The record gives the reactivity of an RNA of 177 nucleotides to DMS and 2A3.
For DMS, 16,062 sequencing reads were counted.
2A3 adducts were read by reverse transcription with SuperScript II with manganese.
High DMS reactivity at an A or C suggests that its Watson-Crick edge is free.
Values cover nucleotides 27 to 126.
The RNA was probed in 150 mM KOAc, 10 mM MgCl2 and 150 mM bicine (pH 8.5) at 24 C.
RNA sequence: GGGAACGACUCGAGUAGAGUCGAAAAGAUGUAUCUAGCCAUGCUAGGUACGUGCUAGCUAGCUAGGCGCACUAGCACGAGUACGACAUGCUAGCGAUCAGGAUCGGAUCUCUGAUCACGUCAUGGGUAAGUGCUUGAUAUUCGUAUCAAGCACUUAAAAAGAAACAACAACAACAAC
Reactivity to DMS in 0.01 (KOAc 150mM, MgCl2 10mM, bicine 150mM(pH8.5), 24C), signal-to-noise 9, nucleotides 027 to 126: g000a070u000g010u000a030u010c000u000a010g010c040c150a120u010g020c020u000a040g000g010u000a010c020g000u000g020c040u000a050g010c060u010a110g020c010u000a180g010g010c120g010c060a110c000u000a050g020c070a050c090g000a100g030u020a050c060g000a080c010a060u000g000c040u000a050g010c110g010a020u000c020a030g010g000a040u010c200g010g010a300u000c050u000c010u010g000a020u000c010a150c050g000u000c020a050u010g000g010g010
Reactivity to 2A3 in 0.01 (KOAc 150mM, MgCl2 10mM, bicine 150mM(pH8.5), 24C), signal-to-noise 6, nucleotides 027 to 126: g060a030u220g010u040a030u020c000u000a010g030c060c130a150u240g000c020u020a020g000g060u020a020c010g000u000g000c000u010a020g000c010u020a020g000c010u040a070g090g210c050g000c050a020c010u000a030g000c030a020c050g030a030g050u090a050c100g030a040c030a010u020g010c030u070a030g030c030g040a010u010c010a020g010g010a040u100c110g200g060a100u030c220u020c020u080g010a010u020c010a000c060g080u080c020a040u080g050g010g080